An RNA of 177 nucleotides, treated with DMS and read out base by base. The data come from the RNA Mapping Database (RMDB), library TTRINS. The DMS profile rests on 3,068 reads.
[RMDB]
RNA sequence: GGGAACGACUCGAGUAGAGUCGAAAAGAUAUGGAUGCUACGAACACUUCGUAGUAGACAUGUCGAUCACUCGGAAACGAGUGGCCGACAACAGCUACAGGCGAAGUGUUCGUAGCAUCCUAAGUCACCUUCCUCUUAUGUUCGCAUAAGAGGAAGGAAAAGAAACAACAACAACAAC
Reactivity to DMS in 0.01 (KOAc 150mM, MgCl2 10mM, bicine 150mM(pH8.5), 24C), signal-to-noise 3, nucleotides 027 to 126: g010a040u000a300u000g010g010a000u000g010c000u000a010c010g010a020a020c010a040c000u010u010c010g040u000a100g030u000a000g000a030c060a300u000g010u000c000g020a020u000c000a000c000u010c010g000g010a150a090a300c000g000a030g030u010g010g010c090c010g000a010c000a000a050c300a230g000c010u000a000c000a170g020g010c000g000a010a020g020u000g000u000u000c000g000u000a000g010c010a000u010c000c000u000a010a060g000u000c060a300
DMS adducts were read by reverse transcription with MarathonRT. The RNA was probed in 150 mM KOAc, 10 mM MgCl2 and 150 mM bicine (pH 8.5) at 24 C.